[RMDB]
RNA sequence: GGGAACGACUCGAGUAGAGUCGAAAAACUGCAACCUGGCACAUGCUCAAUUAUCAUUCCAUGGUCAUAAAGACAGUGUCAAGUUCUUCCUUGGAGUACCUGGAGCAUCGAAGAACGGAGAAGAUGACCCUCCAUUUUAUUUCGAUAAAAUGGAGGGAAAAGAAACAACAACAACAAC
Reactivity to DMS in 0.01 (KOAc 150mM, MgCl2 10mM, bicine 150mM(pH8.5), 24C), signal-to-noise 5, nucleotides 027 to 126: a080c090u000g010c060a060a040c050c040u000g030g030c050a050c050a040u010g000c040u010c060a080a100u000u010a050u000c060a100u000u010c090c060a050u000g020g020u000c070a060u000a050a110a130g010a090c040a060g000u000g000u000c030a040a090g010u010u010c030u000u010c030c030u000u000g000g000a100g020u000a050c080c060u020g010g000a090g000c020a030u010c090g000a040a050g000a030a040c050g000g010a090g020a080a060g010a080u010g010a210
Reactivity to 2A3 in 0.01 (KOAc 150mM, MgCl2 10mM, bicine 150mM(pH8.5), 24C), signal-to-noise 3, nucleotides 027 to 126: a000c040u040g020c010a050a000c000c010u000g020g010c000a020c010a100u030g030c010u000c050a050a120u100u050a090u130c040a040u230u020c110c040a010u050g010g000u010c020a030u110a100a170a030g020a050c030a010g060u030g030u100c030a030a050g010u020u040c010u030u020c000c000u000u050g110g010a060g030u080a120c040c040u030g030g030a050g020c000a030u060c030g050a060a050g030a040a040c060g040g030a100g030a090a010g050a040u100g030a030
Chemical mapping of a 177-nucleotide RNA with DMS and 2A3. The reactions ran in a buffer of 150 mM KOAc, 10 mM MgCl2 and 150 mM bicine (pH 8.5), at 24 C. For 2A3, 3,381 sequencing reads were counted. Source: RMDB library OK2TRN, as collected in RNAgym. For DMS the reverse transcriptase was MarathonRT. Values are in units of 0.01, from 0 to 300, in steps of 10.